[RMDB]
RNA sequence: GGGAACGACUCGAGUAGAGUCGAAAAGAUAUGGACUGUGGGAGAUUACAUCUCGGAAACGAGAUGCGGAUCUUUGAUCACACAUGUCCUAAGUCAAAAUCAUACCCGAGUUCGCUCGGGUAUGAAAGUAACGCCUAAUGUUCGCAUUAGGCGUUACAAAAGAAACAACAACAACAAC
Reactivity to DMS in 0.01 (KOAc 150mM, MgCl2 10mM, bicine 150mM(pH8.5), 24C), signal-to-noise 2, nucleotides 027 to 126: g000a020u010a250u000g000g000a010c010u010g000u010g000g010g020a020g020a050u010u010a130c000a000u000c010u000c000g010g000a070a090a090c000g010a010g000a010u000g000c020g010g010a010u000c020u020u010u000g000a090u030c120a100c010a040c030a030u010g010u000c000c000u000a040a090g010u010c030a100a070a120a160u000c000a020u010a010c000c000c000g020a010g010u000u010c270g030c000u010c010g020g000g000u000a000u000g000a010a040a070